Notes: The record gives the reactivity of an RNA of 177 nucleotides to 2A3.

[RMDB]
RNA sequence: GGGAACGACUCGAGUAGAGUCGAAAACGGAUAGUAAGUGUCACUACUUAGACCUUGUGUCUCCUCAUCUCAACUAAACGAAAUUUUAUCCAUCGCACACAUGUUCGCAUGUGUUUGCGUAUGGUGCUGCGACCCGAAGAUUCGUCUUCGGGUCGCAAAAAGAAACAACAACAACAAC
Reactivity to 2A3 in 0.01 (KOAc 150mM, MgCl2 10mM, bicine 150mM(pH8.5), 24C), signal-to-noise 2, nucleotides 027 to 126: c000g020g020a070u040a030g060u030a120a000g080u050g010u160c010a000c150u110a000c060u230u100a020g020a000c000c020u000u050g000u060g070u040c010u060c010c000u000c080a120u000c000u000c060a040a130c050u160a140a000a040c040g100a150a090a260u190u230u150u100a060u040c020c000a000u000c000g030c000a020c000a000c000a000u000g010u010u000c140g020c100a000u000g000u000g000u000u060u050g000c000g000u060a000u000g010g000u000g010c040